[RMDB]
Source: RMDB library OK2TRN, as collected in RNAgym. Structure probing data (DMS and 2A3) for a 177-nucleotide construct. The RNA was probed in 150 mM KOAc, 10 mM MgCl2 and 150 mM bicine (pH 8.5) at 24 C. For DMS, 644 sequencing reads were counted.
RNA sequence: GGGAACGACUCGAGUAGAGUCGAAAAUAUCGCUCGUAUGGAACGUCGUUAUCCGCGUGCUUUACUGAAUAACCUGAUUUAUCAGCCAACCUUGAAAGAAGAGGAUUUGAGCGAUAAAGAGGCAGUAUCUGAACCCAUGGUUCGCCAUGGGUUCAGAAAAAGAAACAACAACAACAAC
Reactivity to DMS in 0.01 (KOAc 150mM, MgCl2 10mM, bicine 150mM(pH8.5), 24C), signal-to-noise 1, nucleotides 027 to 126: u020a060u010c010g030c010u010c000g000u010a070u010g020g030a130a090c100g040u030c010g010u020u000a040u000c000c000g040c220g020u030g030c080u010u000u000a030c070u030g000a170a040u030a080a140c030c010u000g000a270u000u000u020a020u000c020a110g000c010c000a050a080c010c000u000u000g000a060a300a110g010a120a230g000a030g000g000a120u000u010u000g000a100g090c000g040a020u000a000a030a000g000a170g000g010c040a030g020u000a090
Reactivity to 2A3 in 0.01 (KOAc 150mM, MgCl2 10mM, bicine 150mM(pH8.5), 24C), signal-to-noise 1, nucleotides 027 to 126: u130a020u000c000g050c000u000c010g170u190a110u100g100g050a090a030c050g000u030c000g010u030u010a160u210c000c010g000c040g040u070g050c040u170u070u110a040c040u030g070a090a060u120a120a040c000c000u010g000a190u000u080u000a000u040c000a010g000c000c000a000a040c000c010u000u040g150a260a150a030g140a080a030g040a010g070g070a080u050u020u030g030a080g010c020g000a000u010a010a000a000g030a000g010g000c000a000g000u000a040